[RMDB]
The data come from the RNA Mapping Database (RMDB), library OK2TRN. Structure probing data (DMS) for a 177-nucleotide construct. The DMS profile rests on 1,195 reads. Conditions: 150 mM KOAc, 10 mM MgCl2 and 150 mM bicine (pH 8.5), 24 C.
RNA sequence: GGGAACGACUCGAGUAGAGUCGAAAAUCCAGCUGGGGUGGACGUGCCCACCAGCUGCCGAAGGCCAAGACGCCAGGUCCGGUGGACGUGACAAGCAGGACAUGACAUGGUCCGGUGUGACGGCGAGACUCUGUCGUGUCUUCGGACACGACAGAGUAAAAGAAACAACAACAACAAC
Reactivity to DMS in 0.01 (KOAc 150mM, MgCl2 10mM, bicine 150mM(pH8.5), 24C), signal-to-noise 2, nucleotides 027 to 126: u000c060c000a040g000c000u000g000g010g010g040u000g010g000a190c250g010u000g030c030c000c070a110c040c070a030g000c000u000g000c020c070g000a080a140g030g000c010c060a100a130g000a140c100g000c020c020a060g010g000u000c010c020g000g000u000g000g000a050c060g000u010g000a060c040a030a150g020c080a130g000g000a060c030a070u000g020a110c200a100u000g020g010u000c010c010g000g020u010g010u010g000a070c010g040g000c100g010a200g010